RNA sequence: GGGAACGACUCGAGUAGAGUCGAAAAUUUGACUCCGUUAAGGACUGAAGACCAACCCCCAACGGAUGCUCUAGCAAGUGUUCUCUGGUUGGCUUGCUAGCUAAGAUUUAAUCAGAGCAUCCUACGUUCGGGAUAAUGAACGAUUCCCGCCUUGAGGGCCCAUAAUCAACUUCGGUUGAUUAUGGGCAAAAGAAACAACAACAACAAC
Reactivity to 2A3 in 0.01 (KOAc 150mM, MgCl2 10mM, bicine 150mM(pH8.5), 24C), signal-to-noise 2, nucleotides 027 to 156: u130u100u170g100a110c040u010c000c000g000u010u160a070a020g010g060a030c100u140g250a090a020g100a110c040c050a030a110c010c020c000c000c000a020a010c010g000g000a000u000g000c010u000c000u000a000g000c040a040a000g010u000g050u020u030c010u000c000u000g000g010u000u010g030g000c000u000u000g010c000u000a000g030c000u020a000a000g020a210u190u200u300a010a000u000c000a000g000a000g000c000a100u050c000c000u030a070c010g030u020u020c000g070g000g000a060u080a230a000u230g000a010a000c010g010a000u010u060c040c170c000g080c110c070u020u130g050a170g040g040
Record summary
Structure probing data (2A3) for a 207-nucleotide construct. The 2A3 profile rests on 653 reads. Conditions: 150 mM KOAc, 10 mM MgCl2 and 150 mM bicine (pH 8.5), 24 C. The data come from the RNA Mapping Database (RMDB), library ARCHII.